[RMDB]
RNA sequence: GGGAACGACUCGAGUAGAGUCGAAAACUUCCAAGCACAUUACCAGAUGAUCGACUACAGUUGCAUUUCACAAAAUUUGGCGAAAUUCAGCGUUUGGUCCGGCAACACGGCAACCCAGAAAUCGUCACCUGAUACGAUUAUUCGUAAUCGUAUCAGGAAAAGAAACAACAACAACAAC
Reactivity to 2A3 in 0.01 (KOAc 150mM, MgCl2 10mM, bicine 150mM(pH8.5), 24C), signal-to-noise 7, nucleotides 027 to 126: c020u050u010c010c010a030a020g050c030a020c010a090u050u120a060c030c020a020g050a140u090g020a060u080c030g050a050c040u080a050c070a070g000u030u010g020c030a030u010u040u040c050a030c020a040a130a150a250u110u140u100g070g000c070g000a030a040a020u040u040c010a030g010c030g030u050u090u090g040g000u020c010c020g010g020c000a070a040c020a020c070g010g000c000a020a060c000c010c010a020g100a050a070a030u080c050g080u050c040a020
Reactivity to DMS in 0.01 (KOAc 150mM, MgCl2 10mM, bicine 150mM(pH8.5), 24C), signal-to-noise 5, nucleotides 027 to 126: c170u000u000c010c010a130a130g020c060a060c060a060u000u010a070c030c040a060g010a100u000g010a110u000c050g010a070c080u000a080c110a090g020u000u000g000c060a040u010u000u000c030a050c040a050a060a070a120u010u000u010g010g010c060g000a030a050a040u000u000c040a040g010c080g010u000u010u000g010g010u010c040c040g000g000c020a040a080c080a080c060g010g020c040a070a060c010c020c030a110g010a050a040a060u000c060g000u010c110a140